[RMDB]
Record summary:
Chemical mapping of a 177-nucleotide RNA with 2A3 and DMS. The RNA was probed in 150 mM KOAc, 10 mM MgCl2 and 150 mM bicine (pH 8.5) at 24 C. The 2A3 profile rests on 5,801 reads. For DMS, 4,545 sequencing reads were counted.

RNA sequence: GGGAACGACUCGAGUAGAGUCGAAAACACCGGCCGUACGCGGCCGGUGAAGUAUUAACGAAUACUACCGUAGAAGUAUUCAGGUUUCAUAACUACGGAUAAACAUGGCAGGUACGCCUGCCAUGAAAGGUAUUACCUCAUUCGUGAGGUAAUACCUAAAAGAAACAACAACAACAAC
Reactivity to 2A3 in 0.01 (KOAc 150mM, MgCl2 10mM, bicine 150mM(pH8.5), 24C), signal-to-noise 5, nucleotides 027 to 126: c000a010c000c000g000g010c030c010g070u080a070c290g010c000g110g000c000c000g010g000u000g000a010a000g020u060a090u250u160a070a090c070g000a000a000u000a010c000u050a230c010c010g000u010a010g010a160a010g020u020a030u030u050c030a040g110g050u070u140u200c120a100u180a190a060c000u000a000c000g030g030a050u190a030a090a010c000a000u010g010g000c000a000g060g000u050a020c300g080c060c000u000g000c000c000a000u000g000a010a000
Reactivity to DMS in 0.01 (KOAc 150mM, MgCl2 10mM, bicine 150mM(pH8.5), 24C), signal-to-noise 3, nucleotides 027 to 126: c010a000c010c020g040g060c060c000g090u000a090c250g050c050g020g020c010c000g130g020u000g000a000a010g040u060a010u030u010a120a150c120g000a130a000u000a000c000u020a120c020c010g000u010a000g000a270a000g020u000a010u010u020c140a070g030g030u000u000u000c070a050u000a080a110c010u000a000c000g030g000a200u030a060a070a110c030a000u000g000g050c010a050g010g000u000a170c230g000c020c000u000g010c020c000a000u000g000a020a010